[RMDB]
RNA sequence: GGGAACGACUCGAGUAGAGUCGAAAAGAUAUGGACCGGGUCCGGACAACAGCCCGUAUCUGUUAUUAAUGGUCGGAAACGACCAUUAAUAACAGAUACGGGACAUGUCCAGGAUUGGUCCUAAGUCCCUUCAUAUAAUGUUCGCAUUAUAUGAAGGAAAAGAAACAACAACAACAAC
Reactivity to DMS in 0.01 (KOAc 150mM, MgCl2 10mM, bicine 150mM(pH8.5), 24C), signal-to-noise 2, nucleotides 027 to 126: g000a110u000a290u010g000g000a020c010c000g020g020g030u000c000c030g000g000a030c010a030a090c300a200g000c010c010c010g060u010a000u000c000u000g010u000u000a010u000u000a010a010u000g020g000u020c000g000g010a110a090a270c000g000a020c000c000a000u000u000a000a010u010a000a010c000a010g000a000u000a000c000g000g010g020a000c040a060u000g010u000c000c000a130g050g000a060u010u010g000g000u000c000c010u010a020a100g010u000c050